[RMDB]
Chemical mapping of a 177-nucleotide RNA with DMS and 2A3. The RNA was probed in 150 mM KOAc, 10 mM MgCl2 and 150 mM bicine (pH 8.5) at 24 C. For 2A3 the reverse transcriptase was SuperScript II with manganese. The data come from the RNA Mapping Database (RMDB), library M2PK50.

RNA sequence: GGGAACGACUCGAGUAGAGUCGAAAACUCGGUUAAUUCGUUAACCGAGACUUCUUAAACAUCUUUUCAACACAUAGAUGGUAAAUAUUCAAAGAUGUUGGAAUGCGAUAAACUUCGGUUUAUCGAAUGUUAGUCAAAUGUUCGCAUUUGACUAACAAAAAGAAACAACAACAACAAC
Reactivity to DMS in 0.01 (KOAc 150mM, MgCl2 10mM, bicine 150mM(pH8.5), 24C), signal-to-noise 4, nucleotides 027 to 126: c000u000c000g000g000u000u000a000a020u000u010c160g020u000u000a010a000c000c000g010a020g010a040c070u000u000c010u000u000a080a050a050c050a040u000c010u000u000u010u000c060a050a040c070a030c060a150u010a120g000a070u000g020g010u010a050a110a080u000a070u000u010c130a030a080a060g010a040u000g010u000u000g010g000a030a060u000g010c010g000a000u000a010a000a020c000u010u000c160g030g020u000u000u000a000u000c000g000a060a060
Reactivity to 2A3 in 0.01 (KOAc 150mM, MgCl2 10mM, bicine 150mM(pH8.5), 24C), signal-to-noise 4, nucleotides 027 to 126: c000u010c010g000g010u050u030a030a030u080u050c120g030u040u000a000a000c000c000g000a000g010a010c030u030u020c010u030u120a130a070a030c010a050u030c020u010u020u040u060c060a070a040c020a020c020a140u130a110g080a160u040g030g000u050a080a150a070u220a080u100u080c040a060a000a040g030a030u030g010u000u000g040g050a080a060u110g090c000g000a000u000a010a010a010c000u050u060c200g070g010u010u010u010a020u000c000g020a050a020